[RMDB]
The record gives the reactivity of an RNA of 207 nucleotides to 2A3 and DMS.
RNA sequence: GGGAACGACUCGAGUAGAGUCGAAAAGAAGCAGUCCUUAUUGUGUGUGAUGUUUAGUCAUCGCACUGUCCCUACGGGCUGCCAACGUAGGCCCAAUGUGCCGAGAGGCACUAGAAGUACGGCUUAUUAUGAGGCAUCGCCGUACCAACGAUGCUGAAUUAUAGUAGCGUUUCGACGCUACUAUAAUAAAAGAAACAACAACAACAAC
Reactivity to 2A3 in 0.01 (KOAc 150mM, MgCl2 10mM, bicine 150mM(pH8.5), 24C), signal-to-noise 9, nucleotides 027 to 156: g160a050a010g010c000a000g010u020c020c020u070u080a200u220u200g090u020g000u000g010u010g040a020u010g100u070u170u220a270g120u150c010a000u000c000g000c000a000c000u010g110u070c020c010c010u030a040c020g000g000g000c000u000g000c000c010a090a020c080g050u040a010g020g020c000c010c000a030a060u090g000u000g000c000c000g020a020g020a040g010g000c000a000c000u020a040g060a210a020g090u100a030c030g010g000c020u020u020a030u100u070a110u180g110a060g000g040c010a020u020c010g000c030c030g040u040a070c020c010a030a020c030g010a010u020g000c010u040g050a070
Reactivity to DMS in 0.01 (KOAc 150mM, MgCl2 10mM, bicine 150mM(pH8.5), 24C), signal-to-noise 5, nucleotides 027 to 156: g010a090a070g000c000a030g010u000c010c010u010u000a100u000u010g010u000g050u010g010u000g030a030u000g010u000u000u000a250g020u000c000a010u000c010g030c000a010c000u000g000u000c020c030c010u000a150c150g000g010g010c010u000g010c020c070a040a080c130g020u000a050g010g020c020c010c030a070a130u010g030u000g030c010c000g000a300g000a300g020g030c000a010c010u000a080g010a100a140g020u000a100c070g020g010c030u000u000a060u010u000a080u010g010a230g020g000c010a020u000c030g020c010c030g020u000a120c090c010a040a030c010g000a020u000g010c000u020g010a150
Annotation:
It was measured as part of the RMDB library OK3TST. Values cover nucleotides 27 to 156.